The data come from the RNA Mapping Database (RMDB), library RFMREP. Structure probing data (DMS) for a 177-nucleotide construct. Conditions: 150 mM KOAc, 10 mM MgCl2 and 150 mM bicine (pH 8.5), 24 C. High DMS reactivity at an A or C suggests that its Watson-Crick edge is free.

[RMDB]
RNA sequence: GGGAACGACUCGAGUAGAGUCGAAAACACGCCAAACCUCUGGAACCCACCCGAGAGGCAUUUCUCGUCAAUCUAUAUCGCACUGUGCAAGCCAGCAGUCGCCUUCCCGUCGUCGACCCGCGCCGUUUAUUGUGUUGAUGUUCGCAUCAACACAAUAAAAAGAAACAACAACAACAAC
Reactivity to DMS in 0.01 (KOAc 150mM, MgCl2 10mM, bicine 150mM(pH8.5), 24C), signal-to-noise 1, nucleotides 027 to 126: c110a110c080g020c020c060a080a140a150c070c000u000c000u010g010g000a100a080c020c000c010a080c150c060c030g000a110g010a040g060g010c110a070u000u000u000c010u000c010g020u000c040a090a090u020c080u000a050u000a060u000c040g010c030a070c070u000g000u010g020c070a110a100g000c030c030a060g010c070a040g000u000c040g000c030c030u000u000c010c000c020g000u000c040g020u000c050g000a110c040c010c000g000c060g000c060c040g000u000u000